The record gives the reactivity of an RNA of 177 nucleotides to DMS and 2A3. 2A3 adducts were read by reverse transcription with SuperScript II with manganese. DMS adducts were read by reverse transcription with MarathonRT. Conditions: 150 mM KOAc, 10 mM MgCl2 and 150 mM bicine (pH 8.5), 24 C. Values cover nucleotides 27 to 126.
RNA sequence: GGGAACGACUCGAGUAGAGUCGAAAAGAUAUGGACCGACCCAGAGUUGCACAGCCGUUGAAAUCGGAAACGAUGGAGGCUGUGGCACUCUCUGCGGUCCUAAGUCAAAGCUACGUUCGCGUAGCAACUCAUAAGGUCGGUUCGCCGACCUUAUGAGAAAAGAAACAACAACAACAAC
Reactivity to DMS in 0.01 (KOAc 150mM, MgCl2 10mM, bicine 150mM(pH8.5), 24C), signal-to-noise 2, nucleotides 027 to 126: g000a080u000a300u000g000g000a000c000c000g020a210c060c020c060a030g010a020g030u000u010g050c000a020c000a010g000c000c000g020u000u000g000a080a140a020u010c000g000g000a110a090a190c000g010a010u000g000g020a090g000g010c000u000g010u000g000g030c010a030c010u000c000u000c020u010g040c040g000g000u010c010c000u000a030a050g010u010c020a100a100a110g010c010u000a010c000g010u010u010c170g020c030g030u000a000g010c000a060a090
Reactivity to 2A3 in 0.01 (KOAc 150mM, MgCl2 10mM, bicine 150mM(pH8.5), 24C), signal-to-noise 1, nucleotides 027 to 126: g000a010u100a050u140g010g010a000c000c010g040a140c130c050c030a010g000a000g000u110u260g000c000a000c020a010g010c010c010g230u300u040g000a040a060a000u000c000g020g000a090a060a040c030g010a030u020g060g010a000g010g020c000u010g000u040g000g000c010a020c000u050c000u000c020u100g010c040g000g000u000c020c000u030a090a020g030u010c090a230a000a000g010c010u000a000c010g050u050u160c300g010c020g170u010a000g030c010a020a020